The record gives the reactivity of an RNA of 177 nucleotides to DMS and 2A3. The DMS profile rests on 5,838 reads. For DMS the reverse transcriptase was MarathonRT.
[RMDB]
RNA sequence: GGGAACGACUCGAGUAGAGUCGAAAACUCUUAGUCUCUUUGAAUUGAUUGGUGAACUUUUCACUCAGCAGCCAUUCACUGAGUGAGCUGUGUGACAGAUGCUGCUCUGUGCCCUGAGGCCACCAGGCCUCGGCUACAUGUUCGCAUGUAGCCGAGGAAAAGAAACAACAACAACAAC
Reactivity to DMS in 0.01 (KOAc 150mM, MgCl2 10mM, bicine 150mM(pH8.5), 24C), signal-to-noise 5, nucleotides 027 to 126: c030u000c060u010u010a100g020u000c030u000c030u010u000u010g000a120a070u010u010g000a120u000u000g020g010u000g000a070a090c100u000u000u010u000c060a060c040u000c020a030g010c060a090g020c070c090a050u000u010c060a110c060u000g020a050g010u010g000a060g020c090u000g000u000g010u010g000a060c100a060g010a050u010g010c070u000g010c060u000c030u000g010u000g010c100c050c050u000g000a080g010g000c030c010a080c090c110a080g010g010
Reactivity to 2A3 in 0.01 (KOAc 150mM, MgCl2 10mM, bicine 150mM(pH8.5), 24C), signal-to-noise 3, nucleotides 027 to 126: c030u070c020u050u130a070g030u030c010u020c000u120u090u100g150a120a080u050u100g060a090u040u120g040g010u040g040a110a110c050u100u060u100u060c040a020c020u030c010a020g010c020a030g030c070c020a070u090u070c060a060c190u100g010a000g020u030g020a030g000c040u040g040u020g020u050g100a000c020a050g070a040u080g060c030u040g030c000u020c000u070g060u040g070c000c000c030u020g040a050g050g000c010c010a020c020c010a030g010g060
The 2A3 profile rests on 3,335 reads.
Source: RMDB library OK2TRN, as collected in RNAgym.